[RMDB]
RNA sequence: GGGAACGACUCGAGUAGAGUCGAAAAUCAUGUUUGUUCGCAAACAUGAAAAGAAAGCACGAAAAUAAAAUAAUAGGGAAGGGAACGUGCACCCACCCAUAAAAACGCACGUGUUCGCACGUGCGAAGUGGUAACGUUUGUUCGCAAACGUUACCACAAAAGAAACAACAACAACAAC
Reactivity to 2A3 in 0.01 (KOAc 150mM, MgCl2 10mM, bicine 150mM(pH8.5), 24C), signal-to-noise 1, nucleotides 027 to 126: u030c000a010u020g010u000u000u040g080u050u060c170g000c110a010a020a000c000a000u020g000a000a020a050a000g050a000a050a000g000c010a000c060g070a290a210a000a070u220a040a010a020a010u210a050a050u080a180g000g040g030a100a080g030g010g000a110a050c010g000u010g020c000a050c000c010c000a000c020c000c000a040u120a020a110a010a000a000c000g030c000a000c000g000u000g010u020u060c230g040c050a000c010g000u000g000c000g000a010a000